[RMDB]
An RNA of 207 nucleotides, treated with 2A3 and read out base by base.

RNA sequence: GGGAACGACUCGAGUAGAGUCGAAAAACAACAGAUAGCUGGAACCAGCGUAGAAUUCUACGCAUAUCCAUAGCGAAUGGUACCUGUAAAGAAAAUAAGGGUGGAUGUACAAGUACCAACAGCCGUUUAUGCCAUGGUGAUGUCAAUCACAUAUGCAUCAUCGUGGAGCAUUCGUGCUCCACGAUGAAAAAGAAACAACAACAACAAC
Reactivity to 2A3 in 0.01 (KOAc 150mM, MgCl2 10mM, bicine 150mM(pH8.5), 24C), signal-to-noise 2, nucleotides 027 to 156: a000c040a020a000c000a020g100a080u090a030g020c020u020g000g030a140a060c070c110a030g000c010g000u020a010g080a170a300u300u160c020u000a000c030g000c010a010u080a000u000c030c000a040u130a000g020c000g060a040a060u060g010g000u000a000c000c000u000g020u010a030a030a020g070a100a140a000a070u130a030a030g060g000g000u060g000g030a020u040g000u000a000c000a000a090g000u000a020c000c020a010a020c030a010g060c000c020g070u000u100u040a100u100g060c060c030a100u130g020g100u050g010a000u010g090u160c080a040a030u000c000a030c020a050u140a010u100g000c000a000

About this RNA:
The 2A3 profile rests on 700 reads. Conditions: 150 mM KOAc, 10 mM MgCl2 and 150 mM bicine (pH 8.5), 24 C. The data come from the RNA Mapping Database (RMDB), library OK3TST.